This 177-nucleotide RNA was probed chemically with 2A3 and DMS. For 2A3 the reverse transcriptase was SuperScript II with manganese. For DMS the reverse transcriptase was MarathonRT. Reactivities are given for positions 27 through 126. The reactions ran in a buffer of 150 mM KOAc, 10 mM MgCl2 and 150 mM bicine (pH 8.5), at 24 C. For DMS, 1,812 sequencing reads were counted.
RNA sequence: GGGAACGACUCGAGUAGAGUCGAAAAGAUAUGGACCACCCUAGCUAGCUGGGUAUCGGAAACGAUACAUAGCUUGGACCUAGGUGGUCCUAAGUCAAACGACGUGCCUGUUCGCAGGCACGUCGAAGACGAUGUAACUGUUCGCAGUUACAUCGUCAAAAGAAACAACAACAACAAC
Reactivity to 2A3 in 0.01 (KOAc 150mM, MgCl2 10mM, bicine 150mM(pH8.5), 24C), signal-to-noise 1, nucleotides 027 to 126: g050a000u060a020u120g010g000a010c000c000a000c210c090c020u010a000g000c050u070a030g040c000u030g070g020g060u000a010u000c010g030g030a070a060a010c010g000a010u000a010c010a010u020a000g000c000u050u160g240g090a060c020c060u000a000g010g000u000g000g010u000c010c000u020a030a010g010u030c040a050a060a190c050g000a000c030g000u030g020c000c000u060g130u160u190c300g000c080a000g000g000c000a020c040g050u020c000g000a000a000
Reactivity to DMS in 0.01 (KOAc 150mM, MgCl2 10mM, bicine 150mM(pH8.5), 24C), signal-to-noise 2, nucleotides 027 to 126: g000a030u000a300u010g000g000a000c000c010a020c100c060c120u000a000g010c050u000a020g020c000u000g020g010g000u000a000u000c000g010g000a110a090a160c010g000a020u010a010c010a030u000a030g000c010u000u010g060g000a100c270c030u000a030g010g040u000g010g000u030c010c000u000a020a100g000u000c030a120a100a300c000g000a020c010g020u000g020c000c000u000g000u000u020c220g000c020a000g000g000c030a000c020g030u000c000g020a020a020